[RMDB]
RNA sequence: GGGAACGACUCGAGUAGAGUCGAAAAUUUAGUCUUCAUUGUGCGGGUGUGAGAUCCAUCUUGGGGGGCAUUAAUUUUAUGUGUACUACGAAAAACUUACGCAGGAGGUCUAUCUCUUUAGAGCAUACAACGUGUGUAACUUCGGUUACACACGUUGAAAAGAAACAACAACAACAAC
Reactivity to 2A3 in 0.01 (KOAc 150mM, MgCl2 10mM, bicine 150mM(pH8.5), 24C), signal-to-noise 3, nucleotides 027 to 126: u090u080u060a010g020u020c040u060u050c030a070u050u130g030u040g040c000g030g020g020u060g000u020g040a090g030a070u000c040c020a060u020c050u060u100g000g020g000g000g010g000c040a040u050u170a120a110u130u140u070u080a140u080g070u010g010u010a070c020u020a050c030g110a050a070a020a030a040c060u080u120a050c050g030c040a010g040g030a020g060g000u010c020u050a060u030c000u000c000u020u100u090a080g000a010g020c020a030u060a140
Reactivity to DMS in 0.01 (KOAc 150mM, MgCl2 10mM, bicine 150mM(pH8.5), 24C), signal-to-noise 2, nucleotides 027 to 126: u030u030u030a040g020u020c020u000u000c030a100u000u000g010u000g020c090g010g030g000u000g030u000g000a130g010a050u060c060c050a090u000c040u020u000g000g000g000g010g000g020c040a050u010u040a060a040u040u010u030u020a040u000g010u000g000u020a090c070u000a060c050g000a060a030a050a130a040c100u000u000a040c070g020c040a010g000g000a060g010g000u020c060u000a040u000c040u000c020u000u040u020a090g010a110g020c120a060u000a130
Structure probing data (2A3 and DMS) for a 177-nucleotide construct.
Conditions: 150 mM KOAc, 10 mM MgCl2 and 150 mM bicine (pH 8.5), 24 C.
Reactivities are rounded to 0.1 and cut off at 0 and 3.
In probing experiments dimethyl sulfate is read out at A N1 and C N3, which are open when not base-paired.
For 2A3 the reverse transcriptase was SuperScript II with manganese.